An RNA of 177 nucleotides, treated with 2A3 and DMS and read out base by base.
Reactivities are given for positions 27 through 126.
It was measured as part of the RMDB library TTRDES.

RNA sequence: GGGAACGACUCGAGUAGAGUCGAAAAGAUAUGGAAUGUGGAUUCUGCGACGAAGAUAUUCGGAAACGAAUAUCAGAGCAGAUCCCAUUCCUAAGUCAAAACAGGUUCUCCGUUCGCGGAGAACCUGGGUUCAUAAACCGUUCGCGGUUUAUGAACCAAAAGAAACAACAACAACAAC
Reactivity to 2A3 in 0.01 (KOAc 150mM, MgCl2 10mM, bicine 150mM(pH8.5), 24C), signal-to-noise 2, nucleotides 027 to 126: g020a010u080a050u120g010g060a000a000u030g150u300g060g060a070u300u100c010u030g040c050g300a300c050g000a280a060g010a000u010a010u000u000c000g000g010a040a100a070c020g010a020a000u000a010u000c010a030g020a000g000c010a000g000a000u030c010c000c000a010u010u030c000c010u010a050a000g040u000c050a000a030a120a150c000a000g000g000u020u020c010u000c010c010g030u060u100c300g000c010g080g000a000g000a000a010c000c010u010g000
Reactivity to DMS in 0.01 (KOAc 150mM, MgCl2 10mM, bicine 150mM(pH8.5), 24C), signal-to-noise 2, nucleotides 027 to 126: g010a030u010a300u010g000g000a020a000u000g010u010g040g020a020u020u030c030u000g020c020g030a200c300g000a130a100g000a010u000a000u000u000c000g000g000a170a100a150c030g000a010a030u000a000u000c000a040g000a170g020c020a000g000a020u000c010c000c000a020u000u000c000c000u000a010a050g020u000c050a100a060a110a300c040a010g000g010u000u000c000u000c000c020g020u000u010c210g040c050g020g000a020g000a000a000c000c000u000g010